[RMDB]
RNA sequence: GGGAACGACUCGAGUAGAGUCGAAAAGCUCGUUGUUCGCAACGAGCAAAAUGACCUUUGUGAUUCACAGGGGAGCGAGGAUCACCCAUUGGGUGAUUGGCCUCGCAUCGAUCUCACAGAUCACUCUGGUAAACACCUCUCUAUUCGUAGAGAGGAACACCCAUCUUUUAUUCGUAAAAGAUGGGUGAAAAGAAACAACAACAACAAC
Reactivity to 2A3 in 0.01 (KOAc 150mM, MgCl2 10mM, bicine 150mM(pH8.5), 24C), signal-to-noise 5, nucleotides 027 to 156: g000c000u000c000g000u000u020g040u070u150c300g010c150a000a010c000g010a000g010c010a000a010a000a040u080g050a000c000c000u010u010u000g030u010g030a060u140u160c070a070c160a270g010g010g000g010a050g010c020g000a000g010g000a010u000c000a000c000c020c070a300u240u300g010g000g000u020g010a020u050u070g210g050c000c000u000c000g010c000a010u050c030g050a090u040c020u010c010a050c020a030g030a010u000c000a000c010u020c020u010g010g010u040a050a090a020c080a050c020c000u010c000u000c000u010a030u090u070c240g080u090a000g000a000g010a000g000g000a010a010
Reactivity to DMS in 0.01 (KOAc 150mM, MgCl2 10mM, bicine 150mM(pH8.5), 24C), signal-to-noise 2, nucleotides 027 to 156: g010c000u000c000g040u000u000g040u010u010c280g010c030a050a010c000g000a010g080c000a010a000a030a120u000g040a060c030c010u000u000u000g020u000g000a120u000u000c020a150c090a100g020g020g020g010a090g000c020g000a020g000g010a230u010c000a000c000c000c030a300u000u020g060g050g020u000g000a010u010u000g020g020c040c000u010c000g010c000a040u010c040g010a100u000c030u010c080a100c180a120g000a060u000c000a040c000u000c000u010g020g030u000a060a110a150c070a140c000c000u000c000u000c000u000a080u000u000c210g020u000a020g000a040g000a020g060g010a040a040